Overview:
The record gives the reactivity of an RNA of 177 nucleotides to DMS and 2A3. The RNA was probed in 150 mM KOAc, 10 mM MgCl2 and 150 mM bicine (pH 8.5) at 24 C. Source: RMDB library 15KREP, as collected in RNAgym. DMS adducts were read by reverse transcription with MarathonRT.
RNA sequence: GGGAACGACUCGAGUAGAGUCGAAAAGUAGGCGGCGACCGAAGCGAGGAGGAAAGCAAAGAAAGCCACGGGGCUAGCGAGUGGAUGUUCCGCCCCAAGGGGAGCCGAGUGAGGCUUAUCCCGGGGAGAUCUAGAUAGUGUUCGCACUAUCUAGAUCAAAAGAAACAACAACAACAAC
Reactivity to DMS in 0.01 (KOAc 150mM, MgCl2 10mM, bicine 150mM(pH8.5), 24C), signal-to-noise 2, nucleotides 027 to 126: g010u010a090g000g000c050g030g000c070g000a130c050c020g010a100a100g000c050g020a090g020g020a110g010g020a100a060a060g010c080a040a090a160g000a080a070a160g000c040c080a090c120g010g010g010g020c050u010a040g000c040g000a070g020u000g010g010a090u010g000u000u000c020c030g020c020c000c000c000a060a120g010g010g010g000a030g030c010c000g000a140g020u010g000a090g000g010c010u000u000a030u020c010c000c030g000g000g020g000a120
Reactivity to 2A3 in 0.01 (KOAc 150mM, MgCl2 10mM, bicine 150mM(pH8.5), 24C), signal-to-noise 1, nucleotides 027 to 126: g080u060a040g080g000c050g010g010c010g020a060c040c000g010a040a000g020c020g000a040g010g010a010g000g040a120a050a000g020c030a040a060a080g070a080a100a000g050c000c000a000c040g060g020g020g000c020u010a010g030c010g020a020g010u040g030g060a060u100g030u050u010c020c030g030c010c000c010c010a050a100g000g000g000g010a000g000c010c000g030a060g100u160g090a060g000g000c000u010u010a020u070c000c000c010g000g000g000g000a060